[RMDB]
The data come from the RNA Mapping Database (RMDB), library RNAMAK. The record gives the reactivity of an RNA of 207 nucleotides to DMS and 2A3. For 2A3, 2,195 sequencing reads were counted. For 2A3 the reverse transcriptase was SuperScript II with manganese.
RNA sequence: GGGAACGACUCGAGUAGAGUCGAAAAGCGUACUACUUCUCGGAUAAGGGAAGCAACAGCGUUAACACGCUCAUCCCAAAUAGGAUGAGCGGGAAAGACGACAUGCUUCCCGUAACGAGAAGUAUCGCAAAGUAGUUGAGUUUCGACUCAACUACAAACCAUCUGGAGUGUUCGCACUCCAGAUGGUAAAAGAAACAACAACAACAAC
Reactivity to DMS in 0.01 (KOAc 150mM, MgCl2 10mM, bicine 150mM(pH8.5), 24C), signal-to-noise 1, nucleotides 027 to 156: g030c030g000u000a210c010u000a000c000u000u000c000u000c000g000g000a150u020a180a250g040g010g000a010a050g000c000a050a130c050a250g020c010g020u000u010a130a300c020a040c000g020c000u000c000a000u020c000c000c000a070a220a290u000a020g060g000a030u010g000a050g050c020g010g000g000a030a160a300g000a040c000g000a200c080a230u000g000c000u000u010c000c000c010g020u000a020a270c050g000a010g000a030a010g010u000a000u000c070g010c020a070a070a110g010u010a000g030u000u000g000a020g000u000u000u000c300g030a160c000u000c000a000a000c000u000a000c000a040a040
Reactivity to 2A3 in 0.01 (KOAc 150mM, MgCl2 10mM, bicine 150mM(pH8.5), 24C), signal-to-noise 2, nucleotides 027 to 156: g000c000g040u100a050c030u000a000c000u020u000c000u000c000g000g010a020u020a020a010g000g010g000a010a000g020c030a040a100c050a070g060c010g010u020u070a060a020c060a000c040g000c000u000c000a000u000c000c000c020a210a250a090u270a060g010g010a000u000g010a010g030c020g000g000g000a000a050a000g050a010c010g020a050c020a060u080g000c000u030u000c000c060c000g000u000a000a000c000g000a000g000a000a000g000u000a000u010c000g010c020a060a100a000g010u010a000g010u000u010g010a000g000u050u100u170c230g080a050c000u000c000a010a000c000u000a000c000a000a000